Notes
Structure probing data (DMS and 2A3) for a 207-nucleotide construct. The RNA was probed in 150 mM KOAc, 10 mM MgCl2 and 150 mM bicine (pH 8.5) at 24 C. For DMS the reverse transcriptase was MarathonRT.
RNA sequence: GGGAACGACUCGAGUAGAGUCGAAAACAUUCGGAUCACGACAAAGCUAAUUCAGAGCGGUUUGGAUUUCAAGCAUCAGCAGGACUCGGACAAUACGAAGGUUGUCGACGCAAUGCCGGGUCGCGGUUGGAACAGUAAAGUUUUUGAAAAACUCAUAACAUAAUGAAGUUUUCGAACUUCAUUAUGUAAAAGAAACAACAACAACAAC
Reactivity to DMS in 0.01 (KOAc 150mM, MgCl2 10mM, bicine 150mM(pH8.5), 24C), signal-to-noise 3, nucleotides 027 to 156: c050a150u000u000c040g020g010a050u010c030a100c050g040a110c030a060a130a170g020c040u010a100a110u000u000c050a090g010a150g040c090g040g010u000u000u020g020g020a110u000u000u000c050a040a120g010c060a080u000c030a070g010c020a130g040g000a090c020u000c020g040g000a090c040a050a080u010a170c050g000a070a120g020g020u010u010g020u000c020g020a150c040g000c040a090a110u000g000c020c010g000g030g020u000c010g040c020g040g050u010u000g020g010a050a060c060a100g000u000a020a040a080g010u000u010u000u000u000g000a070a110a050a040a040c040u010c030a070u000a110
Reactivity to 2A3 in 0.01 (KOAc 150mM, MgCl2 10mM, bicine 150mM(pH8.5), 24C), signal-to-noise 5, nucleotides 027 to 156: c030a040u090u070c020g040g020a050u060c060a040c130g040a030c060a050a150a020g000c020u060a090a050u150u110c090a050g030a020g110c050g060g020u060u070u120g060g020a080u050u150u140c060a050a040g010c010a070u110c030a040g010c020a030g010g110a030c030u020c040g010g010a020c060a070a030u130a120c050g050a070a000g090g000u070u050g080u070c030g020a010c020g020c050a040a050u070g020c010c000g000g000g000u000c020g010c020g060g000u030u050g040g020a040a040c010a030g020u130a020a080a050g010u070u000u010u050u140g130a100a090a010a010a010c080u100c070a100u140a190